[RMDB]
This 207-nucleotide RNA was probed chemically with DMS and 2A3. Reactivities are given for positions 27 through 156. Values are in units of 0.01, from 0 to 300, in steps of 10. The RNA was probed in 150 mM KOAc, 10 mM MgCl2 and 150 mM bicine (pH 8.5) at 24 C. It was measured as part of the RMDB library M2RFPK.

RNA sequence: GGGAACGACUCGAGUAGAGUCGAAAACAGAACUGGAUGGGCCGUGUGCUUAACCAGGACAAGAUCUCCUUCUCUCCAACGUUGUUGCCACCUCAUGAUUCUCCUAACCUGUGCUUGGAGAGACGUGCUACCAUAUAGGUGUUCGCACCUAUAUGAAUCAAAUCAAUAGAUUCGUCUAUUGAUUUGAAAAAGAAACAACAACAACAAC
Reactivity to DMS in 0.01 (KOAc 150mM, MgCl2 10mM, bicine 150mM(pH8.5), 24C), signal-to-noise 2, nucleotides 027 to 156: c050a110g040a090a160c020u010g000g000a170u000g020g000g000c050c030g040u010g030u060g030c050u010u000a060a100c040c010a040g000g000a160c070a090a090g010a020u010c040u000c020c040u000u000c020u020c010u000c010c030a070a100c100g020u010u000g020u000u010g000c020c050a120c040c020u000c020a050u000g010a160u000u010c020u010c030c030u000a060a040c040c050u020g020u000g010c030u000u000g010g010a050g010a030g010a030c060g040u000g020c070u010a210c100c010a050u000a020u000a020g010g040u000g010u000u010c300g040c020a030c000c010u000a010u010a000u010g000a100a190
Reactivity to 2A3 in 0.01 (KOAc 150mM, MgCl2 10mM, bicine 150mM(pH8.5), 24C), signal-to-noise 3, nucleotides 027 to 156: c060a010g050a030a030c010u030g010g040a110u050g060g030g000c040c010g280u250g140u240g140c000u030u020a090a050c000c000a010g040g050a010c060a030a080g020a110u040c040u020c050c000u080u010c020u000c000u010c020c020a080a050c070g000u000u000g030u010u020g000c040c020a030c050c060u040c060a050u110g060a190u140u020c030u040c030c000u070a070a120c010c040u130g080u130g130c100u070u030g000g000a000g000a000g010a010c030g030u060g030c070u110a140c060c010a000u000a000u000a000g000g000u000g030u060u070c250g010c050a000c000c040u000a000u000a000u000g000a000a030